An RNA of 177 nucleotides, treated with 2A3 and DMS and read out base by base. The reactions ran in a buffer of 150 mM KOAc, 10 mM MgCl2 and 150 mM bicine (pH 8.5), at 24 C. 2A3 adducts were read by reverse transcription with SuperScript II with manganese. It was measured as part of the RMDB libraries RFM100 and RFMREP. For 2A3, 938 sequencing reads were counted. Values cover nucleotides 27 to 126.
[RMDB]
RNA sequence: GGGAACGACUCGAGUAGAGUCGAAAAGAUGUCAAGAAGAAACAGCCGUUUCUCACCUUACAGCUAUUAAUGCUAGUUUGGUCAUGAAUUUUAUUACAUUUGAUUUUGGUAAUAGAGGACGGCUUAAAGAUUCCCUUCGAUUCGUCGAAGGGAAUCUAAAAGAAACAACAACAACAAC
Reactivity to 2A3 in 0.01 (KOAc 150mM, MgCl2 10mM, bicine 150mM(pH8.5), 24C), signal-to-noise 3, nucleotides 027 to 126: g110a030u110g020u070c030a000a070g070a030a020g090a020a170a010c030a050g010c000c010g010u000u070u060c020u000c030a000c000c000u020u010a000c000a010g040c030u010a010u300u160a190a080u300g000c000u040a070g020u000u000u020g010g000u030c060a070u100g180a130a060u110u100u060u110a050u000u050a010c030a070u000u030u190g190a250u160u170u140u120g130g000u060a010a000u000a030g000a000g000g010a000c000g000g000c010u010u000a010a030
Reactivity to DMS in 0.01 (KOAc 150mM, MgCl2 10mM, bicine 150mM(pH8.5), 24C), signal-to-noise 3, nucleotides 027 to 126: g010a110u030g000u000c060a060a060g000a050a160g020a110a060a070c160a080g050c010c010g010u000u030u030c000u000c160a180c000c000u000u000a020c010a040g030c000u000a300u050u030a050a090u030g050c000u000a090g010u000u000u000g000g040u000c200a080u020g010a060a060u050u000u020u000a020u010u000a050c030a100u010u000u020g010a160u000u020u000u010g000g000u000a030a010u030a050g000a010g000g000a010c000g000g000c000u000u010a020a050